[RMDB]
RNA sequence: GGGAACGACUCGAGUAGAGUCGAAAAGUUUACGCUCCAAGAUCGGUGGAUAGCAGCCCUAUCAAUAUCUAGGAGAACUGUGCUAUGUUUAGAAGAUUAGGUAGUCUCUAUACAGAACAAUUUACCUCAUACGUUAGGACGUUCGCGUCCUAACGAAGAGUCUUAGAAUCUUCGGAUUCUAAGACUCAAAAGAAACAACAACAACAAC
Reactivity to DMS in 0.01 (KOAc 150mM, MgCl2 10mM, bicine 150mM(pH8.5), 24C), signal-to-noise 2, nucleotides 027 to 156: g010u000u010u000a140c050g040c000u000c000c030a070a100g000a080u000c060g030g000u000g000g010a000u000a050g050c070a250g000c140c080c000u000a060u010c050a090a110u000a120u000c100u020a180g040g010a300g040a070a080c040u010g020u000g010c070u010a170u020g000u000u000u000a020g000a070a110g000a030u030u010a140g040g020u010a150g000u010c000u000c030u010a060u000a110c060a040g010a050a040c050a020a130u000u010u000a050c020c010u000c080a090u010a160c010g000u000u000a020g020g020a010c020g010u010u020c180g000c010g010u000c000c000u020a010a010c000g010a040a110
Reactivity to 2A3 in 0.01 (KOAc 150mM, MgCl2 10mM, bicine 150mM(pH8.5), 24C), signal-to-noise 6, nucleotides 027 to 156: g010u030u080u130a050c040g010c020u000c010c010a030a030g020a050u070c110g070g190u080g080g030a050u030a050g030c070a030g000c020c010c000u030a040u030c040a070a070u050a030u180c020u040a040g030g000a020g030a030a040c060u110g020u030g050c030u060a020u090g020u030u030u010a100g020a290a020g000a040u060u050a030g030g050u030a010g030u010c000u000c010u010a030u000a040c030a030g120a170a020c060a070a050u040u090u080a060c010c010u060c050a100u080a170c020g000u000u000a000g000g000a000c000g020u020u040c180g010c000g080u000c000c000u000a000a000c000g000a010a020
Source: RMDB library M2RFPK, as collected in RNAgym. Structure probing data (DMS and 2A3) for a 207-nucleotide construct. Values cover nucleotides 27 to 156. Values are in units of 0.01, from 0 to 300, in steps of 10. The reactions ran in a buffer of 150 mM KOAc, 10 mM MgCl2 and 150 mM bicine (pH 8.5), at 24 C. For 2A3 the reverse transcriptase was SuperScript II with manganese.